[RMDB]
Source: RMDB library OK2TST, as collected in RNAgym. An RNA of 177 nucleotides, treated with 2A3 and DMS and read out base by base. The 2A3 profile rests on 1,402 reads.
RNA sequence: GGGAACGACUCGAGUAGAGUCGAAAAUUUGCCUGUGACGAAUGCAGUUACUCAUAAAUCAUUGAGCACAUUGGGUACAGAGGGCAAAAGAUAAAUUCCUGUAUUUCCUCUAUUCGGUCAACAGAAAGUACUCUGCCUUAUUCGUAAGGCAGAGUACAAAAGAAACAACAACAACAAC
Reactivity to 2A3 in 0.01 (KOAc 150mM, MgCl2 10mM, bicine 150mM(pH8.5), 24C), signal-to-noise 2, nucleotides 027 to 126: u020u020u050g020c000c020u000g000u070g080a020c010g040a040a010u060g000c070a040g060u070u140a060c000u000c030a040u050a080a130a140u200c070a100u080u170g040a010g000c040a020c020a080u020u050g100g010g000u150a070c000a040g150a130g070g000g000c050a060a020a030a000g050a010u130a090a120a010u080u010c030c030u030g020u070a140u000u010u010c000c010u000c000u000a070u010u040c030g080g000u040c010a060a040c010a100g100a060a060a020
Reactivity to DMS in 0.01 (KOAc 150mM, MgCl2 10mM, bicine 150mM(pH8.5), 24C), signal-to-noise 2, nucleotides 027 to 126: u000u000u000g010c000c030u000g030u000g000a090c030g000a050a060u000g020c100a050g060u010u000a050c000u000c010a000u000a110a140a070u010c240a130u010u010g020a040g040c090a060c110a090u010u000g010g030g030u000a100c090a070g000a180g000g010g010c040a000a040a040a060g000a180u010a090a030a120u000u000c020c040u000g000u000a100u010u000u000c020c000u000c000u000a060u010u000c030g000g020u010c050a030a060c060a100g000a110a050a120

2A3 adducts were read by reverse transcription with SuperScript II with manganese.
The reactions ran in a buffer of 150 mM KOAc, 10 mM MgCl2 and 150 mM bicine (pH 8.5), at 24 C.